Structure probing data (DMS and 2A3) for a 177-nucleotide construct. Source: RMDB library TTRINS, as collected in RNAgym. The 2A3 profile rests on 6,975 reads. The DMS profile rests on 5,603 reads. Reactivities are given for positions 27 through 126. The RNA was probed in 150 mM KOAc, 10 mM MgCl2 and 150 mM bicine (pH 8.5) at 24 C.

[RMDB]
RNA sequence: GGGAACGACUCGAGUAGAGUCGAAAAGAUAUGGACGCAGCAGAGGACAGAUGUACAAUGAUGUAGAUCCUCGGAAACGAGGAUCUAUUGAGUACAUACCUGUCCGACGAAGCUGCGUCCUAAGUCACAUGAAUAGAACGUUCGCGUUCUAUUCAUGAAAAGAAACAACAACAACAAC
Reactivity to DMS in 0.01 (KOAc 150mM, MgCl2 10mM, bicine 150mM(pH8.5), 24C), signal-to-noise 5, nucleotides 027 to 126: g010a040u000a250u020g000g000a020c010g020c010a020g020c000a080g000a180g020g010a030c000a000g030a050u000g000u000a000c000a300a270u010g000a110u000g010u000a010g000a000u000c000c000u000c000g020g000a050a050a120c010g020a010g000g010a000u000c000u000a000u000u000g000a090g040u000a010c000a010u000a070c300c020u000g000u000c000c040g010a050c170g000a110a140g000c010u000g010c010g010u000c000c000u000a000a050g010u000c030a290
Reactivity to 2A3 in 0.01 (KOAc 150mM, MgCl2 10mM, bicine 150mM(pH8.5), 24C), signal-to-noise 2, nucleotides 027 to 126: g020a030u040a020u090g000g010a000c000g000c010a020g020c000a010g050a060g060g010a000c020a020g020a030u020g030u020a010c050a300a300u130g010a000u060g020u010a000g000a010u000c000c000u010c020g000g000a000a040a000c010g000a000g000g000a010u020c000u000a000u010u000g000a010g000u000a000c000a000u040a100c000c050u000g000u030c000c010g020a020c020g000a030a010g000c010u000g000c010g000u000c000c000u010a000a010g000u000c010a010